[RMDB]
RNA sequence: GGGAACGACUCGAGUAGAGUCGAAAAGAAAGAGCCUGAAUACGGAGAACCGUAACGCAUGACCGAAUAUUCAGCCCAGUUCACGACGUAAGUCGUGCGCCCGAGUCUAUCUCUGGGCGCUGGGGUCACGUACAUGCGUCAGGCAGGAGGUAGAGAACACGAGUAGUACUUUCGAGUACUACUCGUGAAAAGAAACAACAACAACAAC
Reactivity to 2A3 in 0.01 (KOAc 150mM, MgCl2 10mM, bicine 150mM(pH8.5), 24C), signal-to-noise 5, nucleotides 027 to 156: g070a020a070a010g050a010g010c010c010u030g060a110a040u100a010c000g020g010a120g100a290a230c020c000g020u020a020a020c010g000c000a000u000g020a050c020c040g080a140a070u130a120u220u200c070a110g080c000c000c000a010g050u160u160c010a000c000g000a020c030g070u130a060a110g010u010c000g000u000g020c010g000c000c010c000g010a010g030u060c110u170a120u180c020u010c060u110g000g000g000c010g000c000u010g010g000g000g030u100c060a010c080g040u060a080c010a000u010g000c000g010u000c010a010g020g000c010a000g050g060a050g020g030u140a050g010a020g020a110a010
Reactivity to DMS in 0.01 (KOAc 150mM, MgCl2 10mM, bicine 150mM(pH8.5), 24C), signal-to-noise 2, nucleotides 027 to 156: g000a120a100a180g000a200g010c010c010u000g030a070a200u000a020c010g020g010a120g040a080a120c030c010g010u000a120a300c020g010c020a010u000g010a170c080c040g030a100a130u010a150u010u010c070a130g000c000c000c040a060g000u000u000c050a040c000g020a030c010g040u010a200a170g020u010c010g020u000g020c000g020c010c010c000g010a040g000u000c130u000a170u000c020u000c000u030g060g000g000c020g020c020u010g010g030g030g030u000c090a040c070g010u000a070c020a020u000g000c000g000u010c010a070g030g020c030a030g000g010a050g000g000u020a050g000a190g020a110a300
The record gives the reactivity of an RNA of 207 nucleotides to 2A3 and DMS. Source: RMDB library OK3TST, as collected in RNAgym. For 2A3 the reverse transcriptase was SuperScript II with manganese. For DMS the reverse transcriptase was MarathonRT. The RNA was probed in 150 mM KOAc, 10 mM MgCl2 and 150 mM bicine (pH 8.5) at 24 C. For 2A3, 2,907 sequencing reads were counted.